An RNA of 177 nucleotides, treated with DMS and 2A3 and read out base by base. The data come from the RNA Mapping Database (RMDB), library M2PK50. For 2A3, 2,794 sequencing reads were counted. For 2A3 the reverse transcriptase was SuperScript II with manganese. Conditions: 150 mM KOAc, 10 mM MgCl2 and 150 mM bicine (pH 8.5), 24 C.

[RMDB]
RNA sequence: GGGAACGACUCGAGUAGAGUCGAAAAGUUAACUCCUUCGGGAGUUAACAAAAGGACAGUGCGAGUCCAAACGCACAAAGAUGACAGAAAUCUCAUCAAAAAAAAGUCCUAGCUUCGGCUAGGACAAGUCUAAGGGAUAGUUCGCUAUCCCUUAGACAAAAGAAACAACAACAACAAC
Reactivity to DMS in 0.01 (KOAc 150mM, MgCl2 10mM, bicine 150mM(pH8.5), 24C), signal-to-noise 2, nucleotides 027 to 126: g000u000u000a000a000c000u000c000c000u000u020c170g030g010g010a020g010u010u010a000a000c000a050a040a060a130g000g020a130c160a070g000u000g000c000g010a190g000u000c030c060a010a120a160c020g010c010a020c000a090a100a170g000a020u000g000a040c160a050g000a110a120a130u020c300u000c010a000u000c020a040a000a000a030a020a080a110a260g010u000c000c000u000a000g000c000u000u020c300g020g000c000u000a010g000g000a000c000a000a060
Reactivity to 2A3 in 0.01 (KOAc 150mM, MgCl2 10mM, bicine 150mM(pH8.5), 24C), signal-to-noise 2, nucleotides 027 to 126: g000u000u000a000a020c000u000c010c000u010u060c140g040g030g000a000g000u000u010a000a000c000a000a010a000a000g040g020a040c040a060g030u000g020c000g020a010g100u020c050c000a100a030a040c030g000c020a000c010a030a060a000g010a000u020g010a010c060a090g280a100a190a110u060c020u000c030a020u010c060a010a010a010a000a000a010a100a090g000u000c000c000u000a000g000c000u020u070c300g100g000c020u000a000g000g010a000c000a000a020

Reactivities are given for positions 27 through 126.